Annotation: The data come from the RNA Mapping Database (RMDB), library RFMREP. The record gives the reactivity of an RNA of 177 nucleotides to 2A3 and DMS. Values are in units of 0.01, from 0 to 300, in steps of 10. The reactions ran in a buffer of 150 mM KOAc, 10 mM MgCl2 and 150 mM bicine (pH 8.5), at 24 C. High DMS reactivity at an A or C suggests that its Watson-Crick edge is free. DMS adducts were read by reverse transcription with MarathonRT.

RNA sequence: GGGAACGACUCGAGUAGAGUCGAAAACCCUCCUUCGGGAGGGAAAACUUUAAGUCUCUUUUCAGGGUGCCACAGGCAAAGCUGGGGACCCAGGGAGAGACGUAAGUAAAACGGUGCUUCGGCACCGGUCCUUUAAUUUGUUCGCAAAUUAAAGGACAAAAGAAACAACAACAACAAC
Reactivity to 2A3 in 0.01 (KOAc 150mM, MgCl2 10mM, bicine 150mM(pH8.5), 24C), signal-to-noise 3, nucleotides 027 to 126: c000c000c000u000c000c000u010u040c240g110g000g010a020g000g000g040a090a100a010a000c030u070u060u080a130a030g000u010c000u000c000u030u020u090u230c060a060g010g010g010u070g250c000c000a190c010a100g070g010c140a270a110a080g080c010u030g000g000g010g030a000c010c000c010a000g000g000g010a000g000a000g000a000c000g000u000a000a010g010u010a010a100a030a060c010g000g000u000g000c000u050u070c150g080g020c000a000c000c010g000
Reactivity to DMS in 0.01 (KOAc 150mM, MgCl2 10mM, bicine 150mM(pH8.5), 24C), signal-to-noise 2, nucleotides 027 to 126: c010c000c000u010c000c000u010u020c180g030g000g000a010g030g010g000a020a020a080a060c010u000u010u010a050a140g000u010c000u000c000u000u000u010u020c030a080g020g010g010u000g000c000c000a190c020a010g000g000c040a100a050a190g000c010u000g000g000g000g000a030c000c000c010a080g010g000g000a010g000a010g010a000c000g020u020a010a000g020u000a040a080a110a300c040g020g020u000g010c030u000u010c210g040g010c000a000c000c000g010